This 177-nucleotide RNA was probed chemically with DMS and 2A3. It was measured as part of the RMDB library M2PK50. DMS adducts were read by reverse transcription with MarathonRT. For DMS, 1,048 sequencing reads were counted. The 2A3 profile rests on 2,360 reads.
RNA sequence: GGGAACGACUCGAGUAGAGUCGAAAACUCUGACGCUUCGGCGUCAGAGAAACCUCUAAGCAGAUAGGCGAGGACGACGCUGCGGAGCGCGUUUGCCAACAAAAACGCAUAGAUUCGUCUAUGCGAAGCUACAGCUUGAGUUCGCUCAAGCUGUAGCAAAAGAAACAACAACAACAAC
Reactivity to DMS in 0.01 (KOAc 150mM, MgCl2 10mM, bicine 150mM(pH8.5), 24C), signal-to-noise 2, nucleotides 027 to 126: c000u010c010u020g000a040c010g040c010u000u040c210g030g000c010g000u020c000a000g000a010g000a060a070a070c060c000u000c070u000a070a130g010c090a090g000a160u000a090g010g030c110g000a040g000g010a300c050g020a090c020g030c010u010g010c040g000g000a030g020c040g000c010g000u000u000u010g000c000c000a100a040c180a030a040a090a130a150c000g000c020a010u000a000g010a070u000u020c140g000u000c000u000a000u000g010c010g000a010a050
Reactivity to 2A3 in 0.01 (KOAc 150mM, MgCl2 10mM, bicine 150mM(pH8.5), 24C), signal-to-noise 2, nucleotides 027 to 126: c000u030c000u000g010a010c000g000c010u030u030c190g130g000c000g000u030c000a000g000a000g000a020a000a000c010c000u020c050u130a150a050g030c020a010g120a300u280a130g080g050c050g030a040g090g000a010c040g040a030c000g020c020u090g010c040g120g060a030g000c200g000c020g010u000u050u010g200c010c010a050a020c080a020a160a000a010a020c000g000c000a010u000a000g000a000u010u040c130g040u000c070u020a000u000g000c000g020a020a010